[RMDB]
RNA sequence: GGGAACGACUCGAGUAGAGUCGAAAAAAAAGAUAUGGAGAAGGAACUACGACUGAUGGAGCCGUUGAAAUGCUCUCGGAAACGAGAGCAUGGAGGCUCCGGAUGUCGCCUUCUCCUAAGUCAAAAAGUAUAACAGGUUGUUCGCAACCUGUUAUACAAAAGAAACAACAACAACAAC
Reactivity to DMS in 0.01 (KOAc 150mM, MgCl2 10mM, bicine 150mM(pH8.5), 24C), signal-to-noise 1, nucleotides 027 to 126: a110a050a100a080g000a040u000a110u020g000g010a030g000a020a000g010g000a190a050c180u000a300c030g020a010c020u000g000a300u040g000g000a000g000c000c000g030u030u000g000a130a090a020u000g000c010u000c000u000c030g000g010a010a010a050c010g010a020g000a020g000c000a000u000g000g000a030g050g000c000u000c000c010g000g000a100u000g010u010c010g010c000c000u000u010c000u000c000c010u000a000a080g000u010c040a120a000a050a120a100